[RMDB]
Source information
This 177-nucleotide RNA was probed chemically with 2A3 and DMS. The data come from the RNA Mapping Database (RMDB), library OK2TST. DMS (dimethyl sulfate) methylates the pairing face of unpaired adenines and cytosines.
RNA sequence: GGGAACGACUCGAGUAGAGUCGAAAAGAGGCCACCUGCCUUGUCAAGUGGGCAUCAAUCCUUAUAGUCGCGAAUGGACCGAUUUGUAUCACCGCUUAGGUGAACUCUCUGAUGUCGGAUACAAUUGAUGUGAGUGUUUUUUCGAAAACACUCACAUAAAAGAAACAACAACAACAAC
Reactivity to 2A3 in 0.01 (KOAc 150mM, MgCl2 10mM, bicine 150mM(pH8.5), 24C), signal-to-noise 3, nucleotides 027 to 126: g020a020g050g040c020c000a030c000c000u040g020c010c060u160u130g130u140c010a020a020g000u040g030g080g010c020a150u000c010a010a080u010c000c010u150u110a180u110a140g160u030c040g000c040g180a130a070u090g060g010a030c020c010g020a020u000u030u200g080u070a180u030c000a010c010c010g000c270u280u250a030g000g030u020g020a020a030c000u040c000u000c050u120g120a070u140g050u010c010g010g040a020u060a210c040a000a110u110u190g040
Reactivity to DMS in 0.01 (KOAc 150mM, MgCl2 10mM, bicine 150mM(pH8.5), 24C), signal-to-noise 4, nucleotides 027 to 126: g000a060g000g010c010c020a050c030c020u000g010c030c160u010u010g010u010c050a030a070g010u010g010g010g020c010a060u010c040a090a160u010c010c010u010u010a100u000a080g010u010c060g010c060g010a090a110u000g010g010a100c060c030g010a050u000u000u000g020u010a110u000c020a030c020c000g020c260u000u010a070g010g000u000g000a040a060c070u000c110u000c070u020g000a060u010g000u000c020g000g000a100u010a060c060a040a110u000u010g010